This 177-nucleotide RNA was probed chemically with 2A3 and DMS. 2A3 is a SHAPE reagent: it acylates the 2'-hydroxyl of flexible nucleotides of all four kinds.
RNA sequence: GGGAACGACUCGAGUAGAGUCGAAAAGCACGGCCUACAGCUAGCGUGCGAACACUUGAGCGGUUCCUCCGGAGCUCUUGUGGAUUAGGACGUUCUCGACGAUGUGCGCAUUCGAGUUCGUCCGAAAGGGUAGGUGCUCCUUCGGGAGUACCUACCCAAAAGAAACAACAACAACAAC
Reactivity to 2A3 in 0.01 (KOAc 150mM, MgCl2 10mM, bicine 150mM(pH8.5), 24C), signal-to-noise 2, nucleotides 027 to 126: g020c010a010c040g100g060c010c050u270a120c100a050g030c050u140a030g090c010g010u010g000c000g020a080a010c000a000c030u020u020g020a000g030c010g060g090u050u050c000c020u030c030c060g090g020a070g000c010u000c020u010u010g020u040g040g010a040u060u230a040g000g000a000c000g020u000u010c000u010c010g010a030c100g070a060u060g050u100g080c130g000c110a040u090u030c000g000a000g000u000u010c000g010u000c000c000g000a020a010a000
Reactivity to DMS in 0.01 (KOAc 150mM, MgCl2 10mM, bicine 150mM(pH8.5), 24C), signal-to-noise 3, nucleotides 027 to 126: g010c020a020c010g000g000c080c040u000a060c190a100g000c090u000a070g020c020g000u000g000c010g000a150a080c100a030c010u000u000g000a010g030c040g000g000u010u010c000c010u010c030c060g020g030a190g020c010u020c000u000u010g010u000g000g020a200u030u000a140g010g000a000c000g000u020u000c000u000c000g010a050c300g000a130u030g010u040g010c120g090c040a160u010u010c010g000a030g020u000u010c000g010u000c020c000g000a050a140a130